[RMDB]
An RNA of 177 nucleotides, treated with DMS and 2A3 and read out base by base. The data come from the RNA Mapping Database (RMDB), library 15KREP. The reactions ran in a buffer of 150 mM KOAc, 10 mM MgCl2 and 150 mM bicine (pH 8.5), at 24 C. 2A3 adducts were read by reverse transcription with SuperScript II with manganese.
RNA sequence: GGGAACGACUCGAGUAGAGUCGAAAACAGGCGGUUAGCAGUAUCACUGUUCCAGCCUAUUACUUAUUUCCAAUUGACUACCUCAUUGGUCUUGGGUAUAGGUUUGUGUGCGUUCCUGACUUUGCUCCUCGGUGUAUGAGUUCGCUCAUACACCGAGAAAAGAAACAACAACAACAAC
Reactivity to DMS in 0.01 (KOAc 150mM, MgCl2 10mM, bicine 150mM(pH8.5), 24C), signal-to-noise 1, nucleotides 027 to 126: c090a050g000g010c050g010g000u000u010a070g020c040a120g000u000a070u010c090a080c060u000g000u020u000c060c030a060g030c000c020u000a020u000u010a000c010u000u010a060u000u000u000c000c000a010a010u000u010g050a020c190u000a100c230c210u000c050a070u010u000g000g010u000c010u000u010g010g010g000u000a010u000a000g000g000u000u000u020g030u000g040u010g010c040g010u000u000c010c030u000g020a070c090u000u000u000g010c030u000c150
Reactivity to 2A3 in 0.01 (KOAc 150mM, MgCl2 10mM, bicine 150mM(pH8.5), 24C), signal-to-noise 2, nucleotides 027 to 126: c010a020g060g000c070g100g040u070u140a030g000c040a010g020u070a030u190c110a030c080u020g040u050u080c000c020a000g020c000c000u030a050u010u100a010c000u000u010a020u010u010u000c000c000a010a030u060u090g040a020c020u120a130c110c050u070c020a070u020u060g000g000u000c020u000u000g010g000g010u000a030u000a010g030g000u000u170u060g100u040g010u030g040c040g020u020u010c010c000u030g030a100c040u080u110u100g000c000u000c010